An RNA of 177 nucleotides, treated with DMS and read out base by base. For DMS the reverse transcriptase was MarathonRT. For DMS, 776 sequencing reads were counted. The reactions ran in a buffer of 150 mM KOAc, 10 mM MgCl2 and 150 mM bicine (pH 8.5), at 24 C. The data come from the RNA Mapping Database (RMDB), library M2PK50.

RNA sequence: GGGAACGACUCGAGUAGAGUCGAAAACAGUGAGACUUCGGUCUCACUGAAAUGACUAUGCACCAUGACGAGGACGAUGAUGCGGAGGACGACGAGGAACAAAAACAGCAAGGUUCGCCUUGCUGAACUAAGGGCGAAGCUUCGGCUUCGCCCUUAGAAAAGAAACAACAACAACAAC
Reactivity to DMS in 0.01 (KOAc 150mM, MgCl2 10mM, bicine 150mM(pH8.5), 24C), signal-to-noise 1, nucleotides 027 to 126: c020a000g030u020g020a020g020a000c010u010u050c200g090g000u000c000u000c000a020c010u000g010a020a050a120u020g000a080c080u000a110u000g020c030a140c080c040a060u000g010a150c090g000a030g000g000a020c070g000a040u000g000a040u000g010c050g000g000a000g000g010a040c090g000a080c040g000a090g010g000a060a020c180a050a000a120a060a090c010a010g000c000a000a000g000g000u000u010c280g000c000c010u000u000g000c000u000g010a010a120